[RMDB]
RNA sequence: GGGAACGACUCGAGUAGAGUCGAAAAUGGUGGUGCAUCACCUGAGGUUGGGAGUUUGAGACUGGCCUGACCAACAUGGAGAAACCUCGUCUCUACUAAAAAUACAAAAUUAGCUGAGCAUGGUGGCACAUGCCUGUAAUCCCAGCUACUCGGAAGACAGUGAGUACGUCUUCGGACGUACUCACUGAAAAGAAACAACAACAACAAC
Reactivity to 2A3 in 0.01 (KOAc 150mM, MgCl2 10mM, bicine 150mM(pH8.5), 24C), signal-to-noise 1, nucleotides 027 to 156: u100g050g020u020g000g050u020g000c020a080u070c000a010c000c040u040g000a010g010g030u000u000g020g040g000a020g000u070u080u150g140a130g070a070c040u000g210g000c000c000u000g000a000c020c000a000a010c070a070u150g010g000a040g020a020a020a020c050c000u080c150g080u050c000u000c000u000a030c010u010a010a000a010a010a090u300a060c120a000a160a040a050u080u000a050g050c070u030g040a000g000c000a000u090g030g020u050g070g010c010a010c010a090u120g000c000c030u040g050u040a000a080u020c000c000c000a010g080c060u130a100c040u030c110g050g030a030a000g060a010

Source information:
Structure probing data (2A3) for a 207-nucleotide construct. Source: RMDB library OK3TST, as collected in RNAgym. 2A3 adducts were read by reverse transcription with SuperScript II with manganese.